The record gives the reactivity of an RNA of 177 nucleotides to DMS and 2A3. For DMS, 33,982 sequencing reads were counted. It was measured as part of the RMDB library OK2TST. Reactivities are rounded to 0.1 and cut off at 0 and 3. For 2A3 the reverse transcriptase was SuperScript II with manganese.
RNA sequence: GGGAACGACUCGAGUAGAGUCGAAAAUGGGGGAAAUGAUGAGAAGAGCGUGUUUUCUUCACUCUAAUACAGAUAUGCACUCUCUCUUUGAUUCUAUGACACCAUUAAAGAGAAGCUGUGUCAUCAGGUUAUACAUUUCAUUCGUGAAAUGUAUAACAAAAGAAACAACAACAACAAC
Reactivity to DMS in 0.01 (KOAc 150mM, MgCl2 10mM, bicine 150mM(pH8.5), 24C), signal-to-noise 9, nucleotides 027 to 126: u010g010g010g000g010g010a130a090a100u000g000a040u010g000a210g010a060a030g010a020g030c300g010u000g010u000u000u000u000c030u000u000c140a090c160u010c120u010a080a090u010a120c200a040g000a060u010a030u010g000c040a040c010u000c100u000c010u000c010u000u000u000g000a120u000u000c050u000a090u000g000a170c080a030c050c050a050u000u010a030a050a080g000a100g000a060a060g010c120u000g000u000g010u000c060a040u000c130a070g010
Reactivity to 2A3 in 0.01 (KOAc 150mM, MgCl2 10mM, bicine 150mM(pH8.5), 24C), signal-to-noise 9, nucleotides 027 to 126: u090g000g000g000g000g030a010a040a080u080g020a020u030g010a020g010a110a020g010a010g010c030g010u020g020u020u070u030u010c000u060u050c030a060c060u130c030u060a070a110u150a140c050a010g030a020u070a020u160g010c010a000c000u020c000u000c000u000c000u040u000u020g010a010u050u010c030u050a080u080g020a010c010a010c030c010a010u060u130a070a100a000g090a010g030a060a020g030c120u060g000u010g040u050c010a050u030c020a020g000